[RMDB]
RNA sequence: GGGAACGACUCGAGUAGAGUCGAAAACUUGCGGCCGCCGAAGCUCUGGCUGGCGGACGGUACGCUGAUAACCGGCACUUUGCCGUCCGGCCCAUCGAUUUCAUAAUGGGUUAUCAGAUGCGUGUGAACUCAUCACUGCAUUCGUGCAGUGAUGAGUAAAAGAAACAACAACAACAAC
Reactivity to 2A3 in 0.01 (KOAc 150mM, MgCl2 10mM, bicine 150mM(pH8.5), 24C), signal-to-noise 2, nucleotides 027 to 126: c010u010u080g030c030g000g050c040c010g000c020c010g140a030a010g000c010u000c110u260g120g050c020u040g090g060c010g000g020a000c000g040g000u080a050c050g020c010u020g050a060u070a190a090c040c000g030g000c040a040c170u260u160u240g010c040c030g040u000c000c030g100g000c030c010c000a030u070c020g050a100u030u220u110c050a100u070a300a010u090g050g000g040u040u020a040u050c020a040g070a120u100g010c090g020u050g030u020g070a040
Reactivity to DMS in 0.01 (KOAc 150mM, MgCl2 10mM, bicine 150mM(pH8.5), 24C), signal-to-noise 2, nucleotides 027 to 126: c090u000u010g010c010g010g000c020c010g000c020c010g010a230a040g010c050u000c190u010g010g030c020u000g010g010c000g020g010a040c010g010g010u000a050c180g000c010u000g020a090u000a110a120c110c010g010g020c040a130c260u000u020u010g010c030c030g000u010c050c060g000g000c000c000c020a050u010c140g000a170u000u030u020c180a080u010a120a060u010g000g000g000u000u000a020u010c060a060g000a040u000g000c060g010u000g010u010g000a160
Structure probing data (2A3 and DMS) for a 177-nucleotide construct. Source: RMDB library OK2TST, as collected in RNAgym. The reactions ran in a buffer of 150 mM KOAc, 10 mM MgCl2 and 150 mM bicine (pH 8.5), at 24 C. For 2A3, 1,043 sequencing reads were counted. DMS adducts were read by reverse transcription with MarathonRT.